[RMDB]
RNA sequence: GGGAACGACUCGAGUAGAGUCGAAAACACGGCCAGCGCCCCAAAGGGGUUGGACAUGAAGGAGGACACGCCCGACACGGCCGAUACCACGCCGCCCACGAUGCCCAUCACCACCUUGCCGACCGCGUAGAAAUCAAUUGUUCGCAAUUGAUUUCUAAAAAGAAACAACAACAACAAC
Reactivity to 2A3 in 0.01 (KOAc 150mM, MgCl2 10mM, bicine 150mM(pH8.5), 24C), signal-to-noise 9, nucleotides 027 to 126: c060a010c020g040g000c010c000a040g010c020g110c010c000c000c010a060a110a070g030g010g010g010u040u070g040g010a040c020a050u150g060a090a040g060g050a040g020g020a030c020a010c090g030c000c000c000g010a020c020a010c060g030g000c010c010g020a020u070a050c020c020a030c040g030c010c000g010c000c000c000a040c030g030a030u100g010c010c000c000a020u030c000a010c020c000a020c000c000u020u060g010c010c010g020a050c010c010g030c020g020
Reactivity to DMS in 0.01 (KOAc 150mM, MgCl2 10mM, bicine 150mM(pH8.5), 24C), signal-to-noise 7, nucleotides 027 to 126: c050a120c120g000g020c000c010a050g000c040g000c020c000c000c120a040a100a180g010g000g010g010u000u000g010g010a070c070a100u020g010a140a080g000g000a090g000g000a140c080a070c110g000c010c010c010g010a140c090a060c090g010g010c030c020g010a090u030a060c070c030a090c120g020c020c040g000c020c010c040a080c110g000a070u010g010c070c020c020a070u010c040a060c070c020a030c020c020u000u010g000c020c010g000a060c030c030g000c100g010